The record gives the reactivity of an RNA of 207 nucleotides to 2A3 and DMS. 2A3 adducts were read by reverse transcription with SuperScript II with manganese.

[RMDB]
RNA sequence: GGGAACGACUCGAGUAGAGUCGAAAAGCAAGCUAGCCGGCAAAAAAGCAAACUUGACCACCCAGGAUAAAAGAGAUCUUAUCCAAGGAUGCAAAAGAUAAUCUCACUUUUGACACCCACUGAUCUCAAAACGUGCGGUUCUUCGGAACCGCACGAACGUAGCUUUAUUCUUCGGAAUAAAGCUACGAAAAGAAACAACAACAACAAC
Reactivity to 2A3 in 0.01 (KOAc 150mM, MgCl2 10mM, bicine 150mM(pH8.5), 24C), signal-to-noise 4, nucleotides 027 to 156: g020c010a010a010g010c000u070a010g010c010c040g150g050c210a110a130a070a050a020a000g010c020a070a050a030c020u040u030g040a130c020c010a030c040c010c000a030g050g000a030u040a030a040a030a030g010a000g000a000u010c010u020u020a020u030c060c060a080a100g030g000a030u060g010c000a010a010a010a010g030a090u150a220a200u170c080u050c090a050c030u020u010u020u020g070a110c000a020c000c010c010a050c070u080g000a000u000c010u000c000a020a070a020a030c000g000u000g000c000g000g030u000u000c000u000u060c110g080g000a000a000c000c000g000c000a000c000g000a000a000
Reactivity to DMS in 0.01 (KOAc 150mM, MgCl2 10mM, bicine 150mM(pH8.5), 24C), signal-to-noise 1, nucleotides 027 to 156: g010c010a010a060g010c010u000a300g060c050c010g000g000c020a010a050a090a130a240a000g020c020a060a140a080c000u010u000g010a090c120c080a180c000c000c040a300g060g010a230u000a070a060a110a070g000a090g030a010u000c000u000u010a030u000c060c050a080a060g030g000a030u000g010c030a010a000a020a010g000a110u000a070a060u000c150u020c050a080c030u000u000u010u000g020a200c000a020c000c000c020a180c100u000g010a020u000c000u000c020a050a010a110a020c010g030u000g000c000g040g030u000u000c000u000u010c300g000g010a000a000c000c000g040c050a010c000g010a010a070